[RMDB]
Source: RMDB library M2RFPK, as collected in RNAgym. An RNA of 207 nucleotides, treated with DMS and 2A3 and read out base by base. 2A3 adducts were read by reverse transcription with SuperScript II with manganese. For DMS the reverse transcriptase was MarathonRT. The RNA was probed in 150 mM KOAc, 10 mM MgCl2 and 150 mM bicine (pH 8.5) at 24 C.
RNA sequence: GGGAACGACUCGAGUAGAGUCGAAAACGCACUCGCAGCUUAAUAACCUGCGCUGAGCCCUUCUCCCCCAGCUUGCCUAUGUCCUAGGGAAUUGGAAGGUCAUCCUUCACAGGAUCGUGUGGAAGUCAUUACUCGUGAGUGUUCGCACUCACGAGAACACUACAGGACGGUUCGCCGUCCUGUAGUGAAAAGAAACAACAACAACAAC
Reactivity to DMS in 0.01 (KOAc 150mM, MgCl2 10mM, bicine 150mM(pH8.5), 24C), signal-to-noise 1, nucleotides 027 to 156: c120g010c090a110c080u000c010g060c050a000g000c020u000u000a120a130u010a120a120c200c010u000g000c030g020c150u000g000a090g000c000c010c060u020u010c010u000c020c000c000c020c050a050g040c070u010u000g000c030c030u020a110u000g020u000c050c020u010a100g020g010g040a020a070u000u000g020g000a040a040g010g020u000c030a100u000c040c000u000u000c100a100c020a060g020g000a060u000c050g000u020g030u000g000g000a070a200g010u000c050a180u000u000a110c000u000c010g020u010g000a050g020u000g010u000u020c300g020c000a010c020u000c000a000c000g000a020g000a050a100
Reactivity to 2A3 in 0.01 (KOAc 150mM, MgCl2 10mM, bicine 150mM(pH8.5), 24C), signal-to-noise 1, nucleotides 027 to 156: c050g020c020a070c000u030c010g000c000a020g010c000u030u000a040a040u080a130a120c000c000u000g000c010g030c200u050g020a090g010c000c000c000u140u040c100u030c000c010c020c000c010a000g010c000u000u060g080c000c000u060a050u090g010u020c010c000u000a070g000g000g170a090a130u130u040g050g000a040a030g050g000u080c020a120u210c010c000u000u060c000a040c010a040g000g020a020u100c080g000u020g000u000g050g040a020a020g020u000c100a050u080u150a100c000u000c000g000u000g010a000g000u000g000u040u100c060g000c050a000c000u000c000a000c000g000a000g000a000a000